Background
Structure probing data (2A3) for a 207-nucleotide construct. Values cover nucleotides 27 to 156. The 2A3 profile rests on 332 reads. The data come from the RNA Mapping Database (RMDB), library OK3TST. Conditions: 150 mM KOAc, 10 mM MgCl2 and 150 mM bicine (pH 8.5), 24 C.
RNA sequence: GGGAACGACUCGAGUAGAGUCGAAAACUGAUUUGAACGCUUUAGAUUGGUUUCAUCAUGCUUCUAUAAUUCACACUAAACCUAUCUAUAAAGAAGUAAAUCCUAUGACCGCAAGUCAUUACCCAAAAAGGAUUCAAACCGGUAGGAAGCGUGGAAGCACACGUCCAGUGUUCGCACUGGACGUGUGAAAAGAAACAACAACAACAAC
Reactivity to 2A3 in 0.01 (KOAc 150mM, MgCl2 10mM, bicine 150mM(pH8.5), 24C), signal-to-noise 1, nucleotides 027 to 156: c110u090g090a210u000u160u010g100a040a040c090g000c050u050u030u280a000g000a000u000u080g060g040u010u000u010c030a050u070c020a010u120g000c000u020u000c000u030a220u080a290a200u150u070c130a030c020a080c140u170a040a060a000c000c000u000a010u040c010u040a210u130a260a220a000g110a040a000g010u090a010a010a010u000c010c010u040a030u040g010a000c080c080g100c220a030a030g000u000c010a000u050u100a070c000c000c000a000a050a110a000a220g000g000a000u000u130c010a030a030a030c060c030g040g040u000a000g020g020a090a000g050c000g000u000g080g020a080a000g050